Structure probing data (2A3 and DMS) for a 177-nucleotide construct. The data come from the RNA Mapping Database (RMDB), library OK1LIB. In probing experiments dimethyl sulfate is read out at A N1 and C N3, which are open when not base-paired. For DMS, 1,222 sequencing reads were counted. DMS adducts were read by reverse transcription with MarathonRT.

RNA sequence: GGGAACGACUCGAGUAGAGUCGAAAAGUCGUUGAUGUCGCGGGCUUGGGCGAUCCAACCAUCACCGUAUCGGCCGGCCAGGGUGGCGCUCUGGGGGCCGCUCGCGGCGACAAAGAUCGGCGGCGGCGACCCAGGCUAGGUUCGCCUAGCCUGGGUCAAAAGAAACAACAACAACAAC
Reactivity to 2A3 in 0.01 (KOAc 150mM, MgCl2 10mM, bicine 150mM(pH8.5), 24C), signal-to-noise 3, nucleotides 027 to 126: g020u030c000g010u010u010g020a040u130g020u050c020g010c050g000g050g000c050u080u170g110g030g010c070g050a070u030c040c020a020a040c030c000a040u070c030a020c020c070g090u100a180u190c020g050g030c050c010g050g120c020c010a040g020g040g010u040g070g050c160g010c110u000c010u050g040g020g000g000g010c010c000g000c010u020c040g060c000g050g000c000g020a000c050a020a140a010g200a080u030c030g020g000c000g000g000c000g030g100c070
Reactivity to DMS in 0.01 (KOAc 150mM, MgCl2 10mM, bicine 150mM(pH8.5), 24C), signal-to-noise 1, nucleotides 027 to 126: g000u000c050g000u000u000g050a050u070g000u000c030g040c070g000g040g020c050u010u000g010g000g000c110g070a090u030c070c090a200a100c050c140a170u000c010a090c040c030g000u030a030u000c050g020g010c020c000g020g000c000c030a040g000g000g000u030g000g000c200g000c010u010c010u030g000g090g000g000g000c040c050g050c000u000c000g000c060g000g000c010g030a040c070a090a160a160g000a160u000c020g040g000c050g050g050c030g000g000c160